This 207-nucleotide RNA was probed chemically with DMS and 2A3. Reactivities are given for positions 27 through 156. The RNA was probed in 150 mM KOAc, 10 mM MgCl2 and 150 mM bicine (pH 8.5) at 24 C. It was measured as part of the RMDB library ARCHII.
RNA sequence: GGGAACGACUCGAGUAGAGUCGAAAAACAUGUUUGUUCGCAAACAUGUAUUAUAAAGGAUAUAGUUUAAUGGUAAAACAGUUGAUUUCAAAUCAAUCAUUAGGAGUUCGAAUCUCUUUAUCCUUGCCAGACCACAGAGGACCUUCGGGUCCUCUAACUAUAUUCAAGUUUUCGAACUUGAAUAUAGAAAAGAAACAACAACAACAAC
Reactivity to DMS in 0.01 (KOAc 150mM, MgCl2 10mM, bicine 150mM(pH8.5), 24C), signal-to-noise 2, nucleotides 027 to 156: a050c010a000u000g030u010u000u010g000u000u020c230g010c000a020a000a020c000a090u000g040u000a010u000u000a120u020a160a050a010g000g010a060u000a000u000a030g000u000u000u000a010a000u010g020g010u000a040a000a010a010c020a300g000u000u000g000a020u010u000u010c120a120a160a060u040c040a000a000u000c020a000u000u010a000g010g000a020g010u000u000c040g000a300a020u000c000u000c010u020u000u000a030u000c010c000u020u000g000c040c030a060g000a150c000c000a010c110a010g000a020g060g000a000c030c040u000u010c300g060g030g040u000c000c000u000c010u000a000a050
Reactivity to 2A3 in 0.01 (KOAc 150mM, MgCl2 10mM, bicine 150mM(pH8.5), 24C), signal-to-noise 4, nucleotides 027 to 156: a000c000a000u000g020u000u000u000g040u040u060c200g000c110a010a000a000c000a010u000g010u010a030u080u150a040u040a030a040a000g000g000a010u000a000u000a020g020u020u000u000a040a020u120g130g080u070a010a010a010a000c000a000g000u010u000g020a040u040u210u300c230a250a210a000u010c010a000a010u020c000a010u010u010a000g000g010a000g010u010u000c000g010a000a000u000c000u010c000u010u010u010a010u000c000c000u000u000g030c010c020a060g060a090c000c050a030c100a100g000a000g000g000a000c000c010u050u100c300g120g000g010u000c000c000u000c000u000a000a000